[RMDB]
RNA sequence: GGGAACGACUCGAGUAGAGUCGAAAAAGAGGGGAAGAGUGAGGCUUAUCCCGGGGAACUCGACUUAUCGUCCCCACAUAGCAGUUUCCAGGACCCCCUUCCAAAAAGACUGAGGGGGGUGGCUAGGCACACUUAUACUGUUCGCAGUAUAAGUGUGAAAAGAAACAACAACAACAAC
Reactivity to 2A3 in 0.01 (KOAc 150mM, MgCl2 10mM, bicine 150mM(pH8.5), 24C), signal-to-noise 3, nucleotides 027 to 126: a020g090a060g010g030g010g000a000a100g060a020g110u090g060a040g090g010c020u060u050a040u090c000c010c030g000g000g000g000a050a030c010u010c040g060a050c070u140u160a100u170c060g040u000c010c000c050c000a010c020a030u100a010g030c080a040g020u030u070u050c040c010a020g070g050a050c000c030c010c010c020u010u000c060c010a040a210a040a070a060g100a070c160u080g000a020g010g010g000g010g000g000u010g000g050c030u040a060g010g000
Reactivity to DMS in 0.01 (KOAc 150mM, MgCl2 10mM, bicine 150mM(pH8.5), 24C), signal-to-noise 4, nucleotides 027 to 126: a100g010a120g000g000g010g000a040a130g010a050g000u000g010a060g010g000c040u010u010a070u020c060c020c020g010g000g010g020a090a060c050u000c020g010a050c110u000u000a090u000c060g000u000c010c010c010c010a100c190a070u000a050g020c040a100g010u000u010u000c010c030a120g010g020a100c040c000c000c000c000u000u000c020c170a070a040a110a130a100g000a120c220u000g000a040g000g010g020g000g010g010u000g000g010c020u000a050g010g010

Annotation: The data come from the RNA Mapping Database (RMDB), library VIROID. The record gives the reactivity of an RNA of 177 nucleotides to 2A3 and DMS. Reactivities are given for positions 27 through 126. 2A3 adducts were read by reverse transcription with SuperScript II with manganese. As a SHAPE reagent, 2A3 marks flexible, mostly unpaired nucleotides at the ribose 2'-OH.